[RMDB]
RNA sequence: GGGAACGACUCGAGUAGAGUCGAAAAGAAAGGCAGCAAGUGCAGCCCACGCAGAGGCAUGCUUUUGCAUGCCCAGUCGAGCCCACGACUCAGGGCAGCUGCGACACUGAGGGCAGCUGCCGAAAGACGCGUCAUAGUAGUUCGCUACUAUGACGCGAAAAGAAACAACAACAACAAC
Reactivity to DMS in 0.01 (KOAc 150mM, MgCl2 10mM, bicine 150mM(pH8.5), 24C), signal-to-noise 2, nucleotides 027 to 126: g000a110a110a150g000g000c020a040g040c040a190a080g040u000g030c030a110g010c000c040c010a140c070g060c140a020g010a110g020g000c000a010u000g000c010u000u000u020u010g030c010a010u000g000c000c000c050a010g000u020c010g000a120g000c010c000c010a250c020g000a070c030u000c110a220g000g000g010c010a090g000c010u000g000c020g020a090c210a150c190u030g030a070g010g000g000c020a040g000c000u000g000c000c000g000a000a030a190g000a160
Reactivity to 2A3 in 0.01 (KOAc 150mM, MgCl2 10mM, bicine 150mM(pH8.5), 24C), signal-to-noise 2, nucleotides 027 to 126: g080a000a080a030g010g010c010a000g000c030a150a140g050u090g150c010a030g000c030c020c010a050c030g160c050a030g080a170g080g000c020a050u050g000c000u140u210u130u240g020c030a050u010g010c000c000c000a020g000u010c020g010a020g020c000c000c010a050c010g070a020c000u050c080a040g040g100g000c000a010g000c010u010g000c010g030a010c050a020c110u160g070a150g010g030g000c000a020g000c010u000g010c000c000g000a010a010a010g060a000